[RMDB]
RNA sequence: GGGAACGACUCGAGUAGAGUCGAAAACCCUGGAUUCGUCCAGGGAAAAAUCCUAAGUCAACUAUGAAGGAAAUUGUCAGUCGCAUUCGGAAACGAAUGACCGACUUGGAUUUAUUUCUGGAGUUGAUAUGGAAAAAAAGGGCGUUUCGACGCCCAACCUGUUAUGCAGGUUCGCCUGCAUAACAGGAAAAGAAACAACAACAACAAC
Reactivity to 2A3 in 0.01 (KOAc 150mM, MgCl2 10mM, bicine 150mM(pH8.5), 24C), signal-to-noise 2, nucleotides 027 to 156: c000c000c030u010g000g010a020u040u040c190g080u020c110c000a020g000g000g010a110a020a090a050a000u010c010c010u050a120a010g020u000c000a010a000c000u030a190u300g040a050a020g010g000a030a000a020u020u040g010u010c010a010g010u000c010g000c020a010u010u000c000g010g090a120a150a120c010g000a000a000u000g000a210c160c010g000a000c030u030u080g000g010a010u000u300u200a010u040u040u000c010u020g000g020a010g000u000u000g000a000u030a060u120g010g050a070a060a010a020a090a030a200g110g010g000c040g020u090u150u140c260g080a060c010g000c000c010c010a000a000
Notes: Conditions: 150 mM KOAc, 10 mM MgCl2 and 150 mM bicine (pH 8.5), 24 C. This 207-nucleotide RNA was probed chemically with 2A3. 2A3 adducts were read by reverse transcription with SuperScript II with manganese. The data come from the RNA Mapping Database (RMDB), library RNAMAK. For 2A3, 1,221 sequencing reads were counted.